[RMDB]
RNA sequence: GGGAACGACUCGAGUAGAGUCGAAAAGAUAUGGACAUACAGCGAUAAGCUAUGGGUCGGAAACGACCCACUAGCUUUUGACGCUGUUUGUCCUAAGUCAAAAUCAGACUACUUCGGUAGUCUGAAACAAUCCUUAUUUCUUCGGAAAUAAGGAUUGAAAAGAAACAACAACAACAAC
Reactivity to 2A3 in 0.01 (KOAc 150mM, MgCl2 10mM, bicine 150mM(pH8.5), 24C), signal-to-noise 6, nucleotides 027 to 126: g010a000u020a010u070g000g000a000c000a000u020a000c000a010g010c000g070a090u110a300a040g000c000u010a010u000g000g010g000u010c010g000g000a050a010a010c000g000a000c010c050c000a000c010u000a000g000c000u100u050u060u200g060a010c000g000c000u000g000u000u010u000g000u000c000c000u000a030a000g010u010c020a010a010a010a300u040c000a000g000a000c000u010a010c000u060u060c270g160g000u000a000g000u000c000u000g000a000a000a000
Reactivity to DMS in 0.01 (KOAc 150mM, MgCl2 10mM, bicine 150mM(pH8.5), 24C), signal-to-noise 8, nucleotides 027 to 126: g000a020u000a150u010g000g000a010c000a010u000a010c000a010g010c000g020a130u000a060a040g010c000u000a030u000g000g000g010u000c000g020g000a030a030a080c010g010a010c000c000c000a000c290u000a000g010c000u000u000u000u010g010a150c040g000c000u000g000u000u000u000g010u000c000c000u000a010a040g000u000c010a080a070a140a160u000c000a000g010a010c000u000a000c000u000u010c220g030g010u000a000g000u000c000u000g000a010a060a150

Source: RMDB library TTRDEL, as collected in RNAgym. This 177-nucleotide RNA was probed chemically with 2A3 and DMS. The 2A3 profile rests on 28,852 reads. 2A3 adducts were read by reverse transcription with SuperScript II with manganese. For DMS the reverse transcriptase was MarathonRT. The RNA was probed in 150 mM KOAc, 10 mM MgCl2 and 150 mM bicine (pH 8.5) at 24 C.